[RMDB]
RNA sequence: GGGAACGACUCGAGUAGAGUCGAAAAUUCCCCAAACCCCCAUUCAAUAAGAAAGGUCUACCUGUAGCUCACAGUCACAGCUAUUAGAGCUGUCCUUGCUUCUUUGGGUUUACUGUUUUAGUUAAUUAACUGGUAGGUAAUUCGUUACCUACCAGUUAAAAGAAACAACAACAACAAC
Reactivity to DMS in 0.01 (KOAc 150mM, MgCl2 10mM, bicine 150mM(pH8.5), 24C), signal-to-noise 2, nucleotides 027 to 126: u000u000c000c010c010c300a050a070a300c040c010c010c030c000a080u050u000c070a070a050u020a070a060g000a030a040a020g000g010u020c030u000a050c080c010u000g000u020a040g000c020u020c070a080c070a060g000u020c130a020c120a020g000c020u010a090u040u000a060g010a050g050c020u000g010u010c060c020u000u000g000c030u000u000c000u000u010u000g000g000g000u000u000u000a100c110u000g030u000u000u000u010a170g000u000u000a100a070u000u000